Conditions: 150 mM KOAc, 10 mM MgCl2 and 150 mM bicine (pH 8.5), 24 C. Chemical mapping of a 177-nucleotide RNA with DMS and 2A3. 2A3 adducts were read by reverse transcription with SuperScript II with manganese. For DMS, 2,238 sequencing reads were counted.

RNA sequence: GGGAACGACUCGAGUAGAGUCGAAAAGAUAUGGACCAAUACAGCUUUUGACGUUGGGUCGGAAACGACCUUGCGAUAAGCUGUUGGUCCUAAGUCAAACACAGCGUUUGUUCGCAAACGCUGUGAAGACAGGGAAUGUCUUCGGACAUUCCCUGUCAAAAGAAACAACAACAACAAC
Reactivity to DMS in 0.01 (KOAc 150mM, MgCl2 10mM, bicine 150mM(pH8.5), 24C), signal-to-noise 2, nucleotides 027 to 126: g000a010u000a140u010g000g000a010c010c000a040a060u010a120c160a020g040c010u000u010u000u010g010a200c070g020u000u000g020g020g010u000c000g000g010a040a010a070c000g010a000c010c000u010u000g000c000g000a090u010a020a020g050c000u000g000u000u000g000g010u000c000c000u000a000a040g000u000c000a210a110a230c010a010c000a000g000c000g010u000u000u000g010u010u000c250g010c000a000a010a000c000g000c010u000g000u000g000a040a060
Reactivity to 2A3 in 0.01 (KOAc 150mM, MgCl2 10mM, bicine 150mM(pH8.5), 24C), signal-to-noise 3, nucleotides 027 to 126: g010a000u020a000u070g000g010a000c010c000a020a050u270a180c040a040g020c010u150u230u300u300g260a060c030g010u020u000g000g000g000u000c010g010g020a000a020a000c000g010a000c000c000u020u030g000c020g170a230u090a300a020g000c010u010g020u000u010g010g000u000c000c000u010a020a010g000u000c020a050a060a070c010a000c010a010g000c020g040u000u000u000g090u100u150c250g000c220a000a000a010c010g000c010u010g000u000g010a010a000